RNA sequence: GGGAACGACUCGAGUAGAGUCGAAAAAUACUGAAUUUUCCUGUGCUCAUGGGCUCCGUCCACAUAUCCUCUGGUAAUGGCCAUUUGACUUCCAUUAAAGCCAAGUAACAAGAAACACAAACAGAAGCUAAUACUAAACCUUCGGGUUUAGUAUUAGAAAAGAAACAACAACAACAAC
Reactivity to DMS in 0.01 (KOAc 150mM, MgCl2 10mM, bicine 150mM(pH8.5), 24C), signal-to-noise 6, nucleotides 027 to 126: a040u040a110c150u010g020a110a080u000u000u010u000c030c010u000g010u000g010c010u000c020a080u010g010g010g010c030u000c020c050g000u010c020c030a050c110a090u010a080u010c030c000u000c030u000g010g010u020a060a050u010g000g010c070c040a080u010u000u020g000a080c050u020u000c040c050a080u020u020a070a070a110g010c020c010a040a060g000u020a050a060c150a060a070g010a060a060a080c120a050c200a030a060a070c080a080g020a150a080g010
Reactivity to 2A3 in 0.01 (KOAc 150mM, MgCl2 10mM, bicine 150mM(pH8.5), 24C), signal-to-noise 9, nucleotides 027 to 126: a000u230a060c090u100g050a090a120u050u020u010u070c000c010u010g030u040g030c010u020c030a060u070g030g050g000c020u030c020c020g050u030c040c010a060c000a030u110a060u050c000c010u030c030u030g030g000u070a100a070u070g040g000c020c020a070u050u030u080g040a070c020u080u010c030c000a050u060u070a090a020a010g020c010c000a050a010g050u060a060a060c080a040a040g100a090a090a010c100a010c040a090a160a000c030a030g060a110a010g020